[RMDB]
RNA sequence: GGGAACGACUCGAGUAGAGUCGAAAAGGAAACGAAUGAAAGUGUCCCUUCCUGGGAACUUGGUAAGCCCAAUAGACUCCCUCUGGGAAACCAGAGGAGGAGUAAGAGCAAUCUUACUUAUCGUCUAGUGGGUAAAAGACAUAAUAGGAAGCAAAUGCCAAGAUGAAAACUUCGGUUUUCAUCUUGGAAAAGAAACAACAACAACAAC
Reactivity to DMS in 0.01 (KOAc 150mM, MgCl2 10mM, bicine 150mM(pH8.5), 24C), signal-to-noise 1, nucleotides 027 to 156: g000g020a020a000a020c020g010a120a120u000g050a130a120a200g020u000g020u000c000c020c020u020u020c000c080u020g030g030g000a120a040c030u000u000g020g010u000a090a270g000c010c020c050a080a050u010a050g000a050c000u000c100c000c000u000c010u010g030g030g020a250a110a230c010c010a050g020a050g000g030a040g020g010a000g020u010a020a050g000a080g000c290a110a110u000c010u000u000a020c000u010u000a110u000c090g000u000c000u010a030g000u000g020g030g000u000a020a030a090a110g000a050c020a080u000a060a170u010a070g000g000a060a060g020c030a060a010a130u000g010
Reactivity to 2A3 in 0.01 (KOAc 150mM, MgCl2 10mM, bicine 150mM(pH8.5), 24C), signal-to-noise 4, nucleotides 027 to 156: g040g010a100a090a030c090g050a070a060u170g050a140a100a040g060u070g110u080c020c000c010u030u060c030c020u040g010g000g020a040a070c010u070u030g050g010u130a080a030g010c000c010c000a000a010u020a000g000a000c000u010c010c010c010u000c000u000g000g010g000a050a060a080c010c000a000g000a000g000g000a010g000g000a000g000u000a000a000g010a000g010c030a060a100u010c000u000u010a010c000u030u020a130u300c010g000u010c000u020a000g020u010g020g010g000u030a020a070a000a000g040a010c020a020u150a070a040u060a170g060g020a030a000g050c060a040a020a070u200g030
Record summary
Source: RMDB library PDB130, as collected in RNAgym. This 207-nucleotide RNA was probed chemically with DMS and 2A3. The RNA was probed in 150 mM KOAc, 10 mM MgCl2 and 150 mM bicine (pH 8.5) at 24 C. Values cover nucleotides 27 to 156.